About this RNA: The data come from the RNA Mapping Database (RMDB), library VIROID. The record gives the reactivity of an RNA of 177 nucleotides to DMS and 2A3. Values cover nucleotides 27 to 126. 2A3 adducts were read by reverse transcription with SuperScript II with manganese.
RNA sequence: GGGAACGACUCGAGUAGAGUCGAAAACCGUCCCCUCGUAAUGGCAGAUGGGACCCAGGCUUCCCCCGGAUUCCCUUAUGGGAAUCGAGGAGAAAAAGUGGCUCUCCCUUAGCCAUCAGAGUGGACGCUUGCUCUUUAAGUUCGCUUAAAGAGCAAGAAAAGAAACAACAACAACAAC
Reactivity to DMS in 0.01 (KOAc 150mM, MgCl2 10mM, bicine 150mM(pH8.5), 24C), signal-to-noise 2, nucleotides 027 to 126: c060c000g010u000c000c000c040c010u010c010g010u000a090a040u010g010g000c000a190g010a100u010g000g000g000a040c210c010c020a040g000g010c300u000u000c010c000c000c000c030g040g000a000u000u000c000c000c000u000u000a120u020g020g010g010a000a000u000c000g000a040g000g000a110g000a020a010a080a120a300g020u000g000g000c030u000c050u000c010c000c000u000u010a220g010c010c010a010u000c120a230g000a030g000u000g000g000a020c010g020
Reactivity to 2A3 in 0.01 (KOAc 150mM, MgCl2 10mM, bicine 150mM(pH8.5), 24C), signal-to-noise 1, nucleotides 027 to 126: c030c010g000u010c000c000c000c010u010c030g120u200a070a010u010g010g020c030a030g000a230u080g030g000g000a110c190c000c010a030g090g000c070u020u010c010c030c000c010c000g160g000a010u000u000c020c000c000u060u170a180u300g000g000g000a000a000u000c000g010a070g010g030a140g040a030a060a000a010a010g120u040g000g000c000u040c000u030c000c020c000u040u080a030g000c000c000a000u010c030a010g000a000g000u020g000g020a000c000g000